[RMDB]
RNA sequence: GGGAACGACUCGAGUAGAGUCGAAAAGACGCCUGUGUGGCGAAUCGAGCAAUGGCAUAAGCCGCAAUAGAAGAUGAGAUGGAAGCGGCAAGAUAGAAUGCUCGCAACAAGAUCCAUCUCACAGAGACCUCACCAGUCAUUUCGAUGACUGGUGAGGAAAAGAAACAACAACAACAAC
Reactivity to DMS in 0.01 (KOAc 150mM, MgCl2 10mM, bicine 150mM(pH8.5), 24C), signal-to-noise 1, nucleotides 027 to 126: g080a170c090g000c000c010u010g010u140g010u020g030g000c000g000a050a020u060c070g000a080g040c040a010a080u010g050g040c000a170u010a180a260g020c010c030g010c100a090a080u020a160g000a100a160g000a270u000g000a000g000a000u000g000g000a050a210g020c000g050g000c010a170a100g000a020u000a100g000a170a070u000g000c010u000c000g000c120a220a020c200a050a130g000a200u000c000c000a030u000c000u000c010a070c130a030g000a060g000a240
Reactivity to 2A3 in 0.01 (KOAc 150mM, MgCl2 10mM, bicine 150mM(pH8.5), 24C), signal-to-noise 2, nucleotides 027 to 126: g050a060c000g010c000c000u270g170u200g180u210g150g000c000g040a020a100u080c020g010a000g000c040a010a200u230g100g000c020a130u040a040a030g020c000c000g000c010a070a090u150a160g130a180a000g050a110u050g000a010g000a000u000g000g010a100a030g000c000g000g000c000a000a010g040a070u060a070g140a170a000u060g000c100u090c060g000c010a000a210c060a050a070g040a080u000c000c000a000u000c000u000c000a000c000a000g070a000g000a020
The record gives the reactivity of an RNA of 177 nucleotides to DMS and 2A3. 2A3 adducts were read by reverse transcription with SuperScript II with manganese. The reactions ran in a buffer of 150 mM KOAc, 10 mM MgCl2 and 150 mM bicine (pH 8.5), at 24 C. For 2A3, 1,442 sequencing reads were counted. Reactivities are given for positions 27 through 126.